[RMDB]
About this RNA: An RNA of 207 nucleotides, treated with 2A3 and DMS and read out base by base. Conditions: 150 mM KOAc, 10 mM MgCl2 and 150 mM bicine (pH 8.5), 24 C. DMS adducts were read by reverse transcription with MarathonRT. DMS (dimethyl sulfate) methylates the pairing face of unpaired adenines and cytosines.
RNA sequence: GGGAACGACUCGAGUAGAGUCGAAAAACUGCAUCUACGGAUGCAGAACUACGUUCAUCCAAUUUAUUUGGACGCAUGAAAUGAGAAUAGGGGACGGGAUUCUCAUACGCAGGCUACGGCCUGCGAAAAAACUCCUUAUGCUUCGGCAUAAGGAGAAUCCUGUAUUUACGUUCGCGUAAAUACAGGAAAAAGAAACAACAACAACAAC
Reactivity to 2A3 in 0.01 (KOAc 150mM, MgCl2 10mM, bicine 150mM(pH8.5), 24C), signal-to-noise 2, nucleotides 027 to 156: a000c000u010g000c000a020u010c000u020a030c250g090g000a000u000g000c010a000g010a010a000c030u130a050c030g040u010u050c040a010u040c020c030a060a110u080u200u130a120u180u040u090g020g020a040c040g060c060a060u120g080a070a080a080u020g010a010g010a000a040u010a070g030g050g000g030a030c030g030g030g000a000u040u020c020u000c030a020u030a060c020g010c020a000g000g000c020u040a060c230g140g030c000c010u000g020c010g010a010a000a000a000a010a000c000u010c000c000u010u000a000u010g010c000u020u010c100g070g010c010a000u000a000a000g010g000a000g000a000a020
Reactivity to DMS in 0.01 (KOAc 150mM, MgCl2 10mM, bicine 150mM(pH8.5), 24C), signal-to-noise 2, nucleotides 027 to 156: a100c010u000g020c000a030u010c000u000a080c300g040g010a030u000g090c000a020g000a070a070c000u000a040c010g010u000u010c020a060u000c070c150a110a090u000u010u010a170u040u010u000g020g010a020c010g010c040a080u000g000a110a110a100u000g000a090g000a020a040u010a130g000g020g040g010a110c040g020g020g010a130u000u000c030u010c010a080u000a180c000g030c030a040g020g030c010u010a110c300g050g000c000c010u030g000c000g000a000a010a030a060a040a040c000u000c000c000u010u000a000u010g000c010u030u020c300g040g010c010a000u010a000a010g000g000a010g000a010a020